[RMDB]
RNA sequence: GGGAACGACUCGAGUAGAGUCGAAAACGCGUCCUGUUCGCAGGACGCGAAUUAAGGAAACCUUCCUGGUGGCGAGAAUAAAUGAGCACUCGCGCUCAUAAUAUAGGUGGGCGUUCGCGCCCACCAACGUAAUAUCGAACUUCGGUUCGAUAUUACGAAAAGAAACAACAACAACAAC
Reactivity to 2A3 in 0.01 (KOAc 150mM, MgCl2 10mM, bicine 150mM(pH8.5), 24C), signal-to-noise 4, nucleotides 027 to 126: c000g010c000g000u000c010c010u020g020u060u040c250g000c050a000g000g000a010c010g000c000g000a000a000u070u050a080a020g060g020a070a040a050c020c000u050u040c010c010u080g070g060u080g080g010c040g020a030g040a090a120u120a200a150a070u140g030a020g020c030a040c060u060c070g040c040g000c000u010c010a090u100a280a080u180a020u090a110g020g000u000g000g000g040c040g020u030u060c210g020c010g000c040c000c000a000c000c000a000a000
Reactivity to DMS in 0.01 (KOAc 150mM, MgCl2 10mM, bicine 150mM(pH8.5), 24C), signal-to-noise 4, nucleotides 027 to 126: c020g030c020g020u000c000c000u000g010u000u000c200g010c000a030g010g010a020c010g000c000g020a020a030u000u020a120a100g010g010a080a110a100c080c050u000u000c010c000u000g010g020u010g010g010c030g020a050g000a140a080u000a020a080a090u000g000a040g010c030a110c120u000c100g010c060g000c010u010c030a030u010a090a080u000a110u010a090g020g010u000g000g000g010c010g010u000u010c120g010c010g010c000c000c000a000c000c000a020a020

An RNA of 177 nucleotides, treated with 2A3 and DMS and read out base by base. The RNA was probed in 150 mM KOAc, 10 mM MgCl2 and 150 mM bicine (pH 8.5) at 24 C. The data come from the RNA Mapping Database (RMDB), library M2PK50. For 2A3 the reverse transcriptase was SuperScript II with manganese.